Chemical mapping of a 177-nucleotide RNA with DMS and 2A3.
[RMDB]
RNA sequence: GGGAACGACUCGAGUAGAGUCGAAAAGGAAAGGGCGCGAAUUGGAAACCAGGGCGCCAUAUUACGCGCGCAAGGAAUUGGGCCUUGGUUUUUUGGAAGGAUUAGAUAAUUACCCGGCGCCCGUCAACUAUGGACUUAUCUUCGGAUAAGUCCAUAGAAAAGAAACAACAACAACAAC
Reactivity to DMS in 0.01 (KOAc 150mM, MgCl2 10mM, bicine 150mM(pH8.5), 24C), signal-to-noise 3, nucleotides 027 to 126: g020g000a110a100a110g010g000g010c000g030c000g000a080a090u010u010g010g010a010a010a020c010c010a010g000g010g010c020g010c000c000a000u010a010u010u000a100c100g010c100g020c140g000c120a100a110g000g000a070a120u000u000g000g000g000c000c010u000u000g010g000u000u000u000u000u010u000g000g010a120a070g000g010a090u020u010a100g010a110u000a070a060u000u000a080c040c000c020g000g010c020g010c000c010c000g010u010c080a040a130
Reactivity to 2A3 in 0.01 (KOAc 150mM, MgCl2 10mM, bicine 150mM(pH8.5), 24C), signal-to-noise 1, nucleotides 027 to 126: g070g000a190a110a130g050g000g000c010g000c050g060a030a060u260u190g050g020a000a030a000c000c010a010g000g000g000c160g040c050c030a010u080a000u010u080a080c080g020c000g010c020g020c180a080a120g030g010a020a030u020u040g010g000g000c050c000u000u000g110g000u030u010u000u000u040u010g060g000a090a030g010g030a000u020u190a040g040a150u180a110a090u110u060a080c000c010c000g120g000c010g000c000c020c000g000u020c010a030a000

Values cover nucleotides 27 to 126.